[RMDB]
RNA sequence: GGGAACGACUCGAGUAGAGUCGAAAAGCAUGCCGUGGUUCCUGCCACCACGUAAAACAGGUAGGGAAAACACAACUGCCAACAACGAAUUGGCACUCGCUGCUUAAUUAAAAGCAGCCGUCUUCCCAAGUUCUGCUCUGAGGCUUGGGCAAGGCGUACUGUCAUUGAACUUCGGUUCAAUGACAGUAAAAGAAACAACAACAACAAC
Reactivity to 2A3 in 0.01 (KOAc 150mM, MgCl2 10mM, bicine 150mM(pH8.5), 24C), signal-to-noise 3, nucleotides 027 to 156: g070c070a070u200g190c040c010g000u010g000g000u050u140c000c000u000g000c000c010a200c020c010a020c030g150u180a000a010a000a000c010a010g020g010u010a010g000g010g010a030a100a090a020c140a020c010a090a160c100u060g000c010c000a020a020c020a050a070c110g100a140a160u010u000g000g010c010a030c000u030c030g000c000u020g020c000u040u050a100a090u140u180a160a300a040a010g000c000a000g000c000c000g000u000c000u000u020c000c000c000a000a010g010u160u200c030u070g160c100u050c110u220g110a020g020g000c000u000u000g000g000g010c020a010a000g000g000c010g000u000
Source: RMDB library ARCHII, as collected in RNAgym. The record gives the reactivity of an RNA of 207 nucleotides to 2A3. For 2A3 the reverse transcriptase was SuperScript II with manganese.